The record gives the reactivity of an RNA of 207 nucleotides to 2A3 and DMS. Reactivities are given for positions 27 through 156.
RNA sequence: GGGAACGACUCGAGUAGAGUCGAAAAUCACCAGAUGCUGCAUCACCUGAUCACUGAUGGCUCAGCGGUAUCCGGCGGUACAACUGAAUACUUGUAGCUGCCUUUUGAGCGGGUUGGCUGCAAUCCGAAAAGAGGACACACUUCGGUGUGUCCUCAACAUUCAGUAGUGCUUCGGCACUACUGAAUGAAAAGAAACAACAACAACAAC
Reactivity to 2A3 in 0.01 (KOAc 150mM, MgCl2 10mM, bicine 150mM(pH8.5), 24C), signal-to-noise 5, nucleotides 027 to 156: u080c020a030c040c000a000g010a030u030g000c010u020g000c010a030u040c020a030c010c010u050g040a070u100c050a040c090u080g030a060u060g050g010c040u040c090a030g000c020g010g000u030a040u010c020c030g030g010c030g030g060u130a090c040a120a030c100u180g060a140a070u110a170c050u010u040g010u040a020g030c000u010g010c000c000u030u030u050u130g090a070g000c050g020g030g010u180u290g090g030c000u020g020c000a010a060u040c030c030g070a050a040a030a060g020a000g000g010a000c000a000c000a000c000u050u100c180g060g000u010g000u000g000u000c000c010u000c000a000a000
Reactivity to DMS in 0.01 (KOAc 150mM, MgCl2 10mM, bicine 150mM(pH8.5), 24C), signal-to-noise 1, nucleotides 027 to 156: u010c020a090c010c000a110g010a060u000g010c010u010g010c030a100u000c060a050c010c000u050g010a210u000c090a110c140u000g000a120u010g010g010c030u010c060a170g050c040g020g000u000a020u000c000c000g030g030c020g010g020u010a080c090a030a100c050u000g010a100a110u010a010c070u000u010g020u000a040g020c000u010g010c010c030u000u000u000u000g000a110g030c080g010g000g030u000u000g030g000c020u010g010c000a080a090u000c020c030g000a080a050a150a160g020a070g000g010a050c000a010c030a010c000u000u000c270g070g000u010g020u010g000u000c000c000u000c000a010a020